The data come from the RNA Mapping Database (RMDB), library OK1LIB. An RNA of 177 nucleotides, treated with DMS and 2A3 and read out base by base. For DMS, 1,039 sequencing reads were counted.
RNA sequence: GGGAACGACUCGAGUAGAGUCGAAAAUAAGAAGCACACGGGACCCAUUUGAUGCGAGCGGCAGUGUUUCAUAGGGCUCUAAAGAAAGCCUGCAUUGCCGGACUCUGUGCUACAGGCCCCCCCUCCGAACAUUGCCAGGUUUCGACCUGGCAAUGUUAAAAGAAACAACAACAACAAC
Reactivity to DMS in 0.01 (KOAc 150mM, MgCl2 10mM, bicine 150mM(pH8.5), 24C), signal-to-noise 1, nucleotides 027 to 126: u030a120a000g000a090a020g000c000a000c040a050c280g070g000g020a160c080c020c020a080u010u000u050g020a090u020g000c010g060a110g010c030g010g060c000a000g040u000g000u000u000u120c260a170u020a020g050g000g000c000u010c100u000a170a040a130g000a160a210a000g000c000c000u000g000c040a020u000u000g000c020c000g000g000a070c000u000c080u000g000u000g000c070u000a070c140a210g020g000c000c010c200c000c000c070c000u000c000c000g020
Reactivity to 2A3 in 0.01 (KOAc 150mM, MgCl2 10mM, bicine 150mM(pH8.5), 24C), signal-to-noise 2, nucleotides 027 to 126: u220a040a010g120a070a070g050c000a000c000a020c150g000g190g000a210c000c050c000a090u200u210u200g080a100u090g050c020g030a000g040c010g000g000c000a020g030u000g050u040u090u090c130a240u300a080g000g000g040c050u050c030u050a140a150a020g050a070a080a000g000c000c040u000g020c020a020u000u030g000c000c020g020g020a050c000u020c030u050g010u040g010c000u040a030c010a120g130g070c020c000c010c000c000c010c000u000c010c060g020